This 207-nucleotide RNA was probed chemically with DMS and 2A3.
Conditions: 150 mM KOAc, 10 mM MgCl2 and 150 mM bicine (pH 8.5), 24 C.
2A3 adducts were read by reverse transcription with SuperScript II with manganese.
For DMS the reverse transcriptase was MarathonRT.
The data come from the RNA Mapping Database (RMDB), library M2RFPK.
For 2A3, 1,719 sequencing reads were counted.
Reactivities are given for positions 27 through 156.
RNA sequence: GGGAACGACUCGAGUAGAGUCGAAAAAGACGUGUACGCACGUCACACCGCGGCGGCGGUGUAAAACAAACAUUAAGCCGCCAGCGUCCCGGAACAAGGCAUUUUCCGAUUCUCCGGGGGUUGCAAAAAAACUGAACUUGGUUCGCCAAGUUCAGAAGUACGAAUACUACUUCGGUAGUAUUCGUACAAAAGAAACAACAACAACAAC
Reactivity to DMS in 0.01 (KOAc 150mM, MgCl2 10mM, bicine 150mM(pH8.5), 24C), signal-to-noise 1, nucleotides 027 to 156: a020g010a000c040g020u010g010u000a090c190g050c000a040c000g000u000c000a050c030a060c120c030g000c060g010g000c000g020g090c000g020g010u010g050u030a030a060a110a260c160a160a200a140c100a130u000u010a080a080g090c020c010g010c020c020a050g060c020g020u020c000c010c000g000g000a030a090c080a140a090g000g020c210a130u000u000u000u010c020c020g010a250u040u000c020u010c020c000g020g020g040g010g000u010u000g000c000a000a010a090a080a080a060a180c000u050g020a000a020c000u000u000g010g020u000u010c300g020c010c020a030a020g020u000u000c010a010g010a000a060
Reactivity to 2A3 in 0.01 (KOAc 150mM, MgCl2 10mM, bicine 150mM(pH8.5), 24C), signal-to-noise 2, nucleotides 027 to 156: a000g010a000c020g000u000g030u060a010c200g030c090a000c010g030u000c000a010c000a000c020c000g010c030g010g000c000g000g000c000g020g020u000g020u030a020a000a000a060c020a050a150a000c020a020u100u140a110a030g010c010c000g020c010c020a000g000c000g020u020c000c000c000g000g000a060a050c100a070a030g090g000c110a110u080u080u180u080c030c030g050a110u100u020c020u000c020c000g000g000g000g000g010u110u110g010c050a000a060a030a000a000a000a060c010u000g000a000a000c000u000u000g010g000u050u030c060g000c080c000a000a000g010u000u000c000a000g000a010a000